[RMDB]
Conditions: 150 mM KOAc, 10 mM MgCl2 and 150 mM bicine (pH 8.5), 24 C. An RNA of 177 nucleotides, treated with DMS and 2A3 and read out base by base. It was measured as part of the RMDB library OK1LIB. For DMS the reverse transcriptase was MarathonRT. The DMS profile rests on 2,291 reads.
RNA sequence: GGGAACGACUCGAGUAGAGUCGAAAAAAUUUCACAAUAAUUGUUGAACAAAUAAAAUGUCAUAUCCUACUAUACCAUGGCCCACAUUUGCUGACUUGAAGCAAAUGCUUCACGGAUUUUGGGCAUCGUUUUAAUUACGCUUCGGCGUAAUUAAAACAAAAGAAACAACAACAACAAC
Reactivity to DMS in 0.01 (KOAc 150mM, MgCl2 10mM, bicine 150mM(pH8.5), 24C), signal-to-noise 2, nucleotides 027 to 126: a060a130u000u020u020c050a040c040a050a080u040a100a120u030u000g000u000u000g010a080a120c200a060a050a050u060a070a080a070a100u070g020u020c060a060u030a100u000c000c010u020a090c120u000a090u060a070c090c070a120u030g010g020c000c040c040a090c040a000u000u000u000g000c010u010g010a130c250u030u010g000a010a000g000c000a050a050a010u000g000c060u000u000c090a060c230g030g000a050u010u020u010u010g000g010g010c000a040u040c090
Reactivity to 2A3 in 0.01 (KOAc 150mM, MgCl2 10mM, bicine 150mM(pH8.5), 24C), signal-to-noise 4, nucleotides 027 to 126: a000a020u160u090u080c190a120c060a090a120u300a060a200u170u060g070u070u050g070a120a040c030a010a050a040u200a120a130a020a050u120g070u070c010a060u010a110u170c000c030u030a130c070u080a050u050a250c060c060a080u080g140g000c000c010c000a010c000a030u020u030u020g100c010u020g090a230c160u180u190g070a090a000g000c010a000a140a170u070g010c000u000u080c050a060c050g070g070a120u150u150u060u090g040g010g000c000a070u070c010